[RMDB]
This 207-nucleotide RNA was probed chemically with 2A3 and DMS. It was measured as part of the RMDB library OK3TST.
RNA sequence: GGGAACGACUCGAGUAGAGUCGAAAAAUGUGGGGUUAGAUACUCGGCACCCUGGAGCUGCUUGUCUGAGCUAUUAUGACUGUGCCGCGGUCAUAGUCCGUUGUGUGUUCCUCUGACCUUUGUGAGGCAGAACGUAUAUUUUGGUGGUGGUAGCCUACAUAGCCUAAAUAUUCGUAUUUAGGCUAUGAAAAGAAACAACAACAACAAC
Reactivity to 2A3 in 0.01 (KOAc 150mM, MgCl2 10mM, bicine 150mM(pH8.5), 24C), signal-to-noise 4, nucleotides 027 to 156: a020u200g020u080g020g000g010g030u090u090a070g050a100u110a110c050u040c030g040g000c040a040c010c010c020u030g050g010a030g030c020u020g010c020u080u100g060u090c090u080g040a030g030c030u010a040u100u060a060u140g040a030c020u050g030u090g070c020c070g060c000g020g000u040c020a030u020a020g020u020c040c050g030u040u050g040u010g010u010g020u060u030c050c010u010c050u030g220a300c020c000u050u090u110g100u140g080a030g000g010c020a000g000a060a010c020g070u070a070u000a090u260u110u060u130g050g000u050g020g000u000g030g010u020a000g000c000c010u020a010
Reactivity to DMS in 0.01 (KOAc 150mM, MgCl2 10mM, bicine 150mM(pH8.5), 24C), signal-to-noise 3, nucleotides 027 to 156: a060u000g030u000g010g000g040g030u000u000a060g010a180u000a060c040u010c020g020g000c040a070c040c020c020u010g030g020a100g040c030u000g010c030u000u000g000u000c050u000g000a130g010c050u010a080u000u000a060u010g010a040c020u010g000u010g020c110c080g000c050g020g020u000c020a060u000a040g000u000c040c050g010u000u000g040u000g010u000g000u000u000c020c010u000c040u010g000a080c040c040u010u000u000g010u000g020a090g000g010c030a090g000a050a050c080g000u000a090u000a110u010u000u000u010g020g030u010g010g030u000g010g000u010a090g000c030c010u000a120